Conditions: 150 mM KOAc, 10 mM MgCl2 and 150 mM bicine (pH 8.5), 24 C. An RNA of 177 nucleotides, treated with DMS and 2A3 and read out base by base. For DMS, 12,057 sequencing reads were counted. For 2A3, 21,358 sequencing reads were counted. Source: RMDB library M2PK50, as collected in RNAgym.
RNA sequence: GGGAACGACUCGAGUAGAGUCGAAAACGUGAUGUGUUCGCACAUCACGAAACUUUGAAGCCGGGAAACACGGCAACCGGCAACAAAGCCGAGUAACUAAGAAAACGCCUGACUUCGGUCAGGCGAACGUAAUUAAUAGGUUCGCCUAUUAAUUACGAAAAGAAACAACAACAACAAC
Reactivity to DMS in 0.01 (KOAc 150mM, MgCl2 10mM, bicine 150mM(pH8.5), 24C), signal-to-noise 8, nucleotides 027 to 126: c010g020u000g010a000u010g020u000g010u000u010c200g020c010a010c000a000u000c000a010c000g000a050a080a130c010u000u000u000g000a070a300g000c000c000g010g000g010a150a050a080c050a050c110g010g010c270a060a040c010c010g000g000c000a020a250c030a010a030a020g010c050c030g000a130g010u010a080a110c130u020a070a090g000a070a070a110a130c020g000c000c000u000g000a010c000u010u010c160g030g010u000c010a000g000g010c000g000a000a020
Reactivity to 2A3 in 0.01 (KOAc 150mM, MgCl2 10mM, bicine 150mM(pH8.5), 24C), signal-to-noise 7, nucleotides 027 to 126: c010g000u000g000a000u010g030u010g020u050u040c130g020c080a000c000a000u000c000a000c000g000a010a000a000c020u050u020u060g030a040a010g010c000c010g010g000g030a060a090a010c090a020c070g040g000c010a010a010c000c000g010g010c000a010a020c020a020a030a010g010c020c010g020a030g090u090a110a090c110u070a160a030g090a100a130a020a020c010g010c000c000u000g010a010c000u010u060c240g060g000u000c000a000g000g010c000g000a000a000